[RMDB]
RNA sequence: GGGAACGACUCGAGUAGAGUCGAAAAGUUGUAAUUUGAAGAAGGCAACUUUGUAGCUGGUCCUUGUCUAUGUUCCUUGGAACAGGACGUCAUAGAGGGUGAGAAUCCCGUGUGGCGAGGAUCCCAGUUAUUUGUAAAGUGCUUUCGACGAGUCGAGCAAUAUAUAUAGCUUCGGCUAUAUAUAUUGAAAAGAAACAACAACAACAAC
Reactivity to 2A3 in 0.01 (KOAc 150mM, MgCl2 10mM, bicine 150mM(pH8.5), 24C), signal-to-noise 4, nucleotides 027 to 156: g020u020u020g020u050a100a260u100u070u170g090a080a060g010a020a000g020g000c020a110a120c060u030u000u060g020u010a010g000c000u010g000g010u000c000c000u040u060g020u000c030u040a300u080g020u040u050c020c000u050u240g100g010a030a020c020a030g000g010a010c000g010u020c010a020u030a070g180a120g060g020g000u010g010a040g010a030a070u030c010c000c020g020u040g010u010g020g000c000g000a010g010g000a050u090c010c030c020a010g010u010u000a050u060u110u110g240u180a040a010a010g000u010g000c000u000u010u010c000g010a000c020g010a030g050u060c030g010a040g060
Reactivity to DMS in 0.01 (KOAc 150mM, MgCl2 10mM, bicine 150mM(pH8.5), 24C), signal-to-noise 2, nucleotides 027 to 156: g010u000u000g000u010a040a060u000u000u000g020a080a300g010a010a010g000g000c010a080a060c000u000u000u010g030u000a030g000c000u000g000g010u000c010c020u000u020g030u000c010u010a060u010g000u000u010c000c050u000u010g020g020a100a100c050a070g010g000a070c060g030u000c050a070u010a080g000a180g020g020g010u010g000a300g000a280a110u010c010c000c010g010u000g000u000g010g030c030g000a080g010g000a030u000c210c030c040a070g020u000u000a020u010u000u000g030u000a020a040a050g040u000g000c030u000u000u000c000g010a300c020g040a110g030u010c020g010a170g000